[RMDB]
The data come from the RNA Mapping Database (RMDB), library OK1LIB. An RNA of 177 nucleotides, treated with 2A3 and DMS and read out base by base. For 2A3 the reverse transcriptase was SuperScript II with manganese. The RNA was probed in 150 mM KOAc, 10 mM MgCl2 and 150 mM bicine (pH 8.5) at 24 C. For 2A3, 11,754 sequencing reads were counted. For DMS, 38,632 sequencing reads were counted.
RNA sequence: GGGAACGACUCGAGUAGAGUCGAAAAAGCGCUUAAUGUGUACAUGGGUAGUCCCCCAUAUCUGUGUACUAUAGCUGAGAGGACUUGCUUGAUAGGGGGAGGAGUGCAAGUUUGGGUGGUGCGCGAAGUGUAUAUUUAUAUUCGUAUAAAUAUACACAAAAGAAACAACAACAACAAC
Reactivity to 2A3 in 0.01 (KOAc 150mM, MgCl2 10mM, bicine 150mM(pH8.5), 24C), signal-to-noise 8, nucleotides 027 to 126: a000g110c080g010c040u140u130a160a070u290g050u030g000u090a000c000a010u020g010g000g000u010a010g030u070c010c000c000c010c000a000u000a000u010c000u010g010u000g000u000a000c010u030a040u100a020g030c030u030g020a020g010a020g080g040a050c010u020u060g030c010u050u080g070a040u110a110g010g000g030g000g000a000g000g020a050g010u040g010c020a030a020g000u010u060u060g030g000g020u060g010g010u030g020c050g000c020g040a100a070
Reactivity to DMS in 0.01 (KOAc 150mM, MgCl2 10mM, bicine 150mM(pH8.5), 24C), signal-to-noise 7, nucleotides 027 to 126: a140g010c020g020c030u010u020a070a070u020g020u010g010u000a000c000a000u000g000g000g010u000a020g000u030c010c000c000c000c010a210u000a000u000c000u000g010u000g010u000a000c000u010a090u030a070g000c040u010g010a210g000a120g000g000a030c020u010u000g010c010u010u020g000a130u030a080g020g010g000g000g010a040g010g000a090g010u010g000c030a030a020g010u000u000u010g000g010g020u020g010g010u010g010c030g010c030g010a070a100